[RMDB]
RNA sequence: GGGAACGACUCGAGUAGAGUCGAAAACUGAUACACGAUCAACCAUCUCGGCAUAGAUCACCAGCCCCUAUCCUGGUUAGCUAAGCCUCAACUAUGUGGACAGUGUUGGAUGCUAAGGGGGAAGAAGUGACUUAUACUGCUUCGGCAGUAUAAGUCAAAAAGAAACAACAACAACAAC
Reactivity to DMS in 0.01 (KOAc 150mM, MgCl2 10mM, bicine 150mM(pH8.5), 24C), signal-to-noise 3, nucleotides 027 to 126: c080u010g000a090u010a090c120a070c070g020a080u020c100a090a160c020c020a040u010c080u010c080g000g000c020a080u000a080g000a050u010c100a060c040c040a070g000c070c020c030c040u000a100u000c080c000u010g000g000u000u000a040g000c010u000a080a110g000c040c010u000c160a060a060c120u020a040u000g010u010g010g000a080c090a090g000u000g020u010u000g000g000a080u000g000c070u000a080a060g000g020g000g010g000a070a040g000a050a070g000
Reactivity to 2A3 in 0.01 (KOAc 150mM, MgCl2 10mM, bicine 150mM(pH8.5), 24C), signal-to-noise 1, nucleotides 027 to 126: c020u050g020a010u080a130c100a000c070g010a070u080c000a060a060c010c000a100u050c040u050c080g040g010c040a060u040a090g060a030u080c040a020c060c020a030g070c000c000c000c040u030a030u030c000c000u020g000g000u070u060a000g000c000u030a100a050g010c060c030u030c020a040a110c090u110a080u240g080u050g070g000a060c070a190g060u090g000u250u080g050g020a040u050g000c000u040a050a080g000g000g030g060g010a040a070g060a050a010g140